[RMDB]
RNA sequence: GGGAACGACUCGAGUAGAGUCGAAAAGAGACAUUUCCUAUCGAUUCUCAAGAUCCUUUAUUGAGGAUCUGAGGGUGUUGAACUAUGCCUAGGAAAGAUAUGCGUAUUCAAAGAACCUUCAGACAUAUACGUACGUCAGGUUCGCCUGACGUACGUAAAAAGAAACAACAACAACAAC
Reactivity to 2A3 in 0.01 (KOAc 150mM, MgCl2 10mM, bicine 150mM(pH8.5), 24C), signal-to-noise 2, nucleotides 027 to 126: g090a010g040a010c030a080u010u070u040c020c000u050a070u100c040g020a070u150u000c000u010c000a020a030g040a060u070c020c020u090u170u200a260u160u190g030a020g000g020a030u000c020u020g000a010g000g000g020u020g030u000u030g050a000a020c110u030a050u000g040c000c010u040a030g020g230a210a080a050g100a140u130a020u090g000c010g010u000a030u050u040c000a050a060a060g100a060a050c010c000u040u050c030a000g040a020c030a000u260a030
Reactivity to DMS in 0.01 (KOAc 150mM, MgCl2 10mM, bicine 150mM(pH8.5), 24C), signal-to-noise 2, nucleotides 027 to 126: g000a090g030a110c130a130u000u010u030c010c000u000a140u010c070g000a120u000u000c000u000c010a080a070g030a050u000c040c030u000u000u000a220u010u020g010a020g000g000a040u000c000u000g000a050g010g010g030u000g000u000u000g000a020a040c280u000a010u000g020c020c060u010a030g000g020a080a060a090g010a150u000a020u010g010c010g020u000a030u000u000c040a030a020a040g020a090a050c000c000u000u000c020a030g010a060c240a120u010a180